An RNA of 177 nucleotides, treated with DMS and 2A3 and read out base by base. For 2A3, 9,959 sequencing reads were counted. Values cover nucleotides 27 to 126. For DMS, 8,499 sequencing reads were counted.
[RMDB]
RNA sequence: GGGAACGACUCGAGUAGAGUCGAAAAACAAUUUCUUUGCUUCCAGGUGUUUGAAAUAUUCCCAUCAGUCCUAAACAUAAUUACAACACCUGUCAGUGGAGAUGUAACUGAGAACGAAGGAAGUGCCGAUUUUUAACUAAUUCGUUAGUUAAAAAUCAAAAGAAACAACAACAACAAC
Reactivity to DMS in 0.01 (KOAc 150mM, MgCl2 10mM, bicine 150mM(pH8.5), 24C), signal-to-noise 5, nucleotides 027 to 126: a090c120a130a060u030u000u010c020u000u010u010g000c010u010u000c060c020a030g010g000u010g000u000u000u020g020a080a070a060u020a080u000u010c010c000c010a110u030c100a120g000u000c020c030u010a060a080a120c150a050u020a080a070u010u000a090c130a030a020c040a010c020c010u000g010u000c020a030g000u000g000g020a110g000a110u020g020u020a060a060c040u000g000a070g000a080a070c150g000a090a080g000g000a050a050g010u010g010c140c170
Reactivity to 2A3 in 0.01 (KOAc 150mM, MgCl2 10mM, bicine 150mM(pH8.5), 24C), signal-to-noise 9, nucleotides 027 to 126: a000c080a050a070u060u100u000c010u050u030u060g050c010u050u040c050c000a010g000g010u010g020u050u090u100g080a080a060a040u200a050u060u040c010c010c000a050u110c050a010g090u040c010c050u100a070a130a040c070a110u230a170a080u190u090a040c020a020a000c000a010c000c000u000g030u030c010a000g010u020g070g060a120g010a070u090g060u160a060a040c040u040g040a020g030a160a010c080g030a060a020g030g020a050a040g030u040g100c040c010